[RMDB]
RNA sequence: GGGAACGACUCGAGUAGAGUCGAAAACAGUCAAUGUGAAGGCGGGCCAGACCAUCGCCGCAUUCUACCAGAGCACCGUCAUGAUCUUUGGCACGAUGGCUCGCUACAUGCAAAGAGUUAGGGAAAACCUAUCGGAUCGAUUCGUCGAUCCGAUAGGAAAAGAAACAACAACAACAAC
Reactivity to 2A3 in 0.01 (KOAc 150mM, MgCl2 10mM, bicine 150mM(pH8.5), 24C), signal-to-noise 2, nucleotides 027 to 126: c030a020g140u110c060a040a110u070g080u030g100a160a010g000g010c010g000g030g000c010c020a020g020a140c030c030a100u070c090g030c080c020g000c000a020u080u040c020u040a100c020c050a030g000a000g070c070a020c060c060g130u140c020a090u120g070a120u040c000u030u060u100g010g040c030a000c060g090a050u090g010g000c000u000c010g010c000u050a030c000a040u110g050c010a020a070a040g060a040g000u100u070a090g010g040g040a020a040a030a060
Reactivity to DMS in 0.01 (KOAc 150mM, MgCl2 10mM, bicine 150mM(pH8.5), 24C), signal-to-noise 3, nucleotides 027 to 126: c070a140g010u000c070a080a190u000g040u000g020a120a210g000g000c000g010g000g000c030c030a090g010a110c120c070a090u000c140g000c080c040g000c080a030u000u000c060u000a080c080c050a080g010a020g010c090a070c000c020g020u000c110a060u020g020a080u020c030u000u020u000g010g020c000a070c130g000a130u010g010g010c010u000c020g000c000u000a020c090a070u010g000c050a040a070a130g010a020g010u000u010a060g000g000g010a110a030a080a170